The record gives the reactivity of an RNA of 177 nucleotides to DMS and 2A3. Values cover nucleotides 27 to 126. For DMS the reverse transcriptase was MarathonRT. The RNA was probed in 150 mM KOAc, 10 mM MgCl2 and 150 mM bicine (pH 8.5) at 24 C.
RNA sequence: GGGAACGACUCGAGUAGAGUCGAAAACACUGGUACGCGUUCGCGCGUACCAGUGAAAGCUAGGCUUGGGCGUAAGUACAGAGUAGCCUUUGCCUUAAACCUCUACAAGUGUUCGCACUUGUAGAGGCACAAGGUAUACGUUCGCGUAUACCUUGUGAAAAGAAACAACAACAACAAC
Reactivity to DMS in 0.01 (KOAc 150mM, MgCl2 10mM, bicine 150mM(pH8.5), 24C), signal-to-noise 5, nucleotides 027 to 126: c010a010c000u020g010g000u000a000c000g010c000g030u000u010c200g010c020g030c000g030u000a000c000c000a010g000u000g000a020a060a110g010c120u000a020g010g010c010u000u000g000g010g000c000g010u000a080a110g010u010a150c270a180g000a150g010u010a270g000c010c010u000u000u000g010c000c010u000u000a030a080a210c010c000u000c000u000a000c000a000a000g010u000g000u000u010c180g010c000a000c010u000u000g000u000a000g000a000g000g010
Reactivity to 2A3 in 0.01 (KOAc 150mM, MgCl2 10mM, bicine 150mM(pH8.5), 24C), signal-to-noise 6, nucleotides 027 to 126: c000a000c000u010g020g010u000a000c000g050c010g010u030u070c210g020c000g000c010g110u020a000c010c000a000g000u000g010a000a000a000g050c050u030a010g000g010c000u010u030g020g020g000c030g100u150a090a090g080u080a150c100a110g200a090g130u130a040g020c010c030u010u010u020g020c010c000u030u030a040a110a030c010c000u000c000u010a000c000a000a010g000u010g050u060u100c200g070c110a000c000u000u010g000u000a000g000a000g000g000